[RMDB]
RNA sequence: GGGAACGACUCGAGUAGAGUCGAAAAAAAGGUUCGACAAGAAGGUGAAUUAUCAGGCAACGUCAUUCCAGAAAGCUGCUCUGUGAGCCCUGGUGGUGCCAUUGUACUAAGUUCAGCUUUAAGAUGGCAGCUGUCAGAUUUUCGAAUCUGACAGCUGAAAAGAAACAACAACAACAAC
Reactivity to DMS in 0.01 (KOAc 150mM, MgCl2 10mM, bicine 150mM(pH8.5), 24C), signal-to-noise 2, nucleotides 027 to 126: a070a070a060g030g000u010u010c030g040a100c120a070a120g020a030a070g010g000u000g010a070a040u010u000a070u000c180a020g000g040c020a030a050c090g020u010c020a030u000u000c070c020a050g020a060a080a070g010c080u020g010c020u010c080u010g020u000g030a030g020c030c170c020u000g000g000u000g010g000u000g000c020c010a060u000u000g010u000a070c060u000a030a050g010u000u000c080a010g010c050u000u000u000a110a190g000a070u010g010g030
Reactivity to 2A3 in 0.01 (KOAc 150mM, MgCl2 10mM, bicine 150mM(pH8.5), 24C), signal-to-noise 1, nucleotides 027 to 126: a100a000a010g110g020u000u030c000g010a030c050a030a120g130a070a000g030g080u000g030a040a030u070u010a060u240c030a000g000g000c010a070a000c000g010u010c020a010u130u000c000c010a030g060a040a100a020g050c060u090g010c000u020c090u150g190u070g050a010g000c020c000c020u070g120g010u070g010g030u050g030c020c000a040u030u060g030u030a090c060u040a000a030g000u010u030c000a030g030c070u010u060u100a100a010g050a090u110g080g000